[RMDB]
RNA sequence: GGGAACGACUCGAGUAGAGUCGAAAAAGAGGAGGCUGGGUUUUGCGAUCUUUAAGCAGAUGGCAGGUUCACCCCGUACGGUGCGGAAGUUCGCGCUUCCGUGAAUCGCGAAAAUCGGACGGUGGCUAAGACCAAUAACAGUUCGCUGUUAUUGGAACAUGAGAUAAGACUUCGGUCUUAUCUCAUGAAAAGAAACAACAACAACAAC
Reactivity to DMS in 0.01 (KOAc 150mM, MgCl2 10mM, bicine 150mM(pH8.5), 24C), signal-to-noise 3, nucleotides 027 to 156: a120g010a120g000g020a060g020g030c060u000g020g020g030u000u000u000u000g020c020g000a090u000c040u000u010u010a060a160g030c110a080g010a070u010g020g040c020a070g000g010u000u000c070a070c030c010c010c020g010u000a040c020g020g020u010g000c020g030g010a040a030g010u000u000c300g010c300g020c010u000u000c000c010g030u010g020a080a050u000c070g020c060g000a070a040a060a080u000c050g010g010a060c010g000g010u020g040g020c050u010a070a120g000a110c000c010a020a030u000a010a010c010a030g040u000u010c300g040c000u000g000u000u000a010u000u000g000g010a050a090
Reactivity to 2A3 in 0.01 (KOAc 150mM, MgCl2 10mM, bicine 150mM(pH8.5), 24C), signal-to-noise 5, nucleotides 027 to 156: a010g050a030g030g000a030g000g020c050u030g030g030g010u010u060u070u080g010c020g030a040u050c040u070u150u090a090a040g030c030a030g030a060u050g040g010c030a020g030g000u080u110c030a040c010c010c000c000g000u020a020c020g010g020u030g000c000g000g010a010a010g010u080u200c070g010c040g010c090u010u010c010c000g000u010g060a050a080u080c040g000c020g110a050a050a010a060u060c010g000g010a000c040g010g040u070g020g000c010u060a090a020g040a050c000c000a000a000u010a000a000c000a000g030u070u080c190g060c100u000g000u010u000a000u000u010g000g010a000a010